Annotation
Structure probing data (DMS and 2A3) for a 177-nucleotide construct. DMS adducts were read by reverse transcription with MarathonRT. The reactions ran in a buffer of 150 mM KOAc, 10 mM MgCl2 and 150 mM bicine (pH 8.5), at 24 C.
[RMDB]
RNA sequence: GGGAACGACUCGAGUAGAGUCGAAAAGGGUUACCGUUCGCGGUAACCCAAAUAAAAUCAGCGGUAAGCACCCGUAAAAUAUUACCGCUGAACGGGAGCUUAAAAUCGAUGUGUUCGCACAUCGAAAGUAAUCAUAGCUCUUCGGAGCUAUGAUUACAAAAGAAACAACAACAACAAC
Reactivity to DMS in 0.01 (KOAc 150mM, MgCl2 10mM, bicine 150mM(pH8.5), 24C), signal-to-noise 1, nucleotides 027 to 126: g010g040g030u000u000a000c020c000g020u000u010c090g080c020g000g010u000a000a000c000c000c030a020a000a050u000a060a100a140a200u000c000a000g000c000g040g000u000a010a030g010c230a080c040c000c030g030u020a070a070a120a060u020a070u000u000a010c020c000g020c000u000g000a040a030c210g020g010g020a160g020c070u010u010a080a090a140a110u000c000g000a020u000g010u010g010u000u020c160g000c000a000c000a000u000c000g000a020a030a100
Reactivity to 2A3 in 0.01 (KOAc 150mM, MgCl2 10mM, bicine 150mM(pH8.5), 24C), signal-to-noise 2, nucleotides 027 to 126: g000g000g010u000u000a000c020c000g000u020u060c250g000c000g110g000u000a000a010c020c000c000a020a000a000u020a000a040a000a050u010c000a010g000c000g000g010u020a030a000g050c100a180c030c020c040g020u060a060a140a110a020u150a060u020u030a010c000c000g000c020u010g000a000a000c000g030g020g050a070g010c060u130u250a060a000a040a170u090c020g000a000u020g010u010g030u050u110c250g030c070a000c000a010u000c000g010a000a010a000